[RMDB]
RNA sequence: GGGAACGACUCGAGUAGAGUCGAAAAGGUGUGAGAGCACGACCCGCGACAUCGGGACUGAGACACUGCCCGGACUCCUACGGGAGGCUGCAGCAACGAAUCUUCCGCAAUGGGCGCAAGCCUGACGCUACAUUAAUAUGUUCGCAUAUUAAUGUAGAAAAGAAACAACAACAACAAC
Reactivity to 2A3 in 0.01 (KOAc 150mM, MgCl2 10mM, bicine 150mM(pH8.5), 24C), signal-to-noise 7, nucleotides 027 to 126: g080g000u020g000u020g040a110g000a010g040c010a010c050g080a110c000c000c010g030c040g050a070c030a120u220c030g000g000g050a060c060u060g050a010g000a080c030a010c050u040g000c010c020c000g000g040a040c010u020c000c010u040a090c190g060g000g000a010g010g000c010u040g000c010a030g000c010a030a040c020g030a050a050u010c020u040u020c010c010g010c090a050a120u150g010g040g000c010g000c040a040a010g020c000c020u040g030a030c040g000
Reactivity to DMS in 0.01 (KOAc 150mM, MgCl2 10mM, bicine 150mM(pH8.5), 24C), signal-to-noise 9, nucleotides 027 to 126: g010g020u000g020u010g000a170g010a170g010c020a040c050g010a140c030c010c010g010c090g010a080c160a070u000c050g010g000g010a090c110u000g000a110g010a140c130a060c080u000g000c010c140c010g010g010a060c030u000c010c020u000a110c150g010g010g010a030g010g010c040u000g000c110a060g000c050a040a070c090g000a070a120u000c040u000u000c020c030g000c170a090a080u000g010g000g000c020g000c180a090a120g000c030c020u000g010a080c220g010
Background
Chemical mapping of a 177-nucleotide RNA with 2A3 and DMS. Conditions: 150 mM KOAc, 10 mM MgCl2 and 150 mM bicine (pH 8.5), 24 C. It was measured as part of the RMDB library RFMREP.